RNA sequence: GGGAACGACUCGAGUAGAGUCGAAAACAGGCAUGAGUCACCGCCCCCGGCCGGAGGUUGACGAUUUUUGCAAAAAUAUGGAACAUUUGGGAUUUUCAUUUCUUAGAUUAUCCUCCUUGCGCCGCUCACGAAUGUAUAUGUUCGCAUAUACAUUCGUAAAAGAAACAACAACAACAAC
Reactivity to 2A3 in 0.01 (KOAc 150mM, MgCl2 10mM, bicine 150mM(pH8.5), 24C), signal-to-noise 4, nucleotides 027 to 126: c030a010g090g000c020a050u060g040a040g060u010c010a010c030c020g010c000c010c000c000c040g050g010c050c030g020g010a020g040g010u060u140g030a010c000g030a010u040u060u040u130u130g020c050a070a040a010a070a030u170a090u190g020g010a070a010c010a050u050u060u160g080g010g020a040u030u000u040u060c020a040u050u130u050c060u080u100a050g000a080u030u020a020u050c000c010u020c020c030u010u070g020c040g000c010c010g020c020u030c010
Reactivity to DMS in 0.01 (KOAc 150mM, MgCl2 10mM, bicine 150mM(pH8.5), 24C), signal-to-noise 5, nucleotides 027 to 126: c120a100g010g000c040a050u010g000a090g020u000c030a060c050c030g010c020c020c020c050c020g000g030c100c110g010g000a050g010g000u000u000g020a060c060g010a040u000u000u000u000u000g010c090a040a080a060a060a070u010a070u010g010g010a060a060c100a070u000u010u010g010g000g010a070u000u000u000u010c050a080u000u000u010c110u000u010a090g010a040u000u000a060u000c010c010u000c070c030u000u000g020c240g000c010c020g010c180u000c110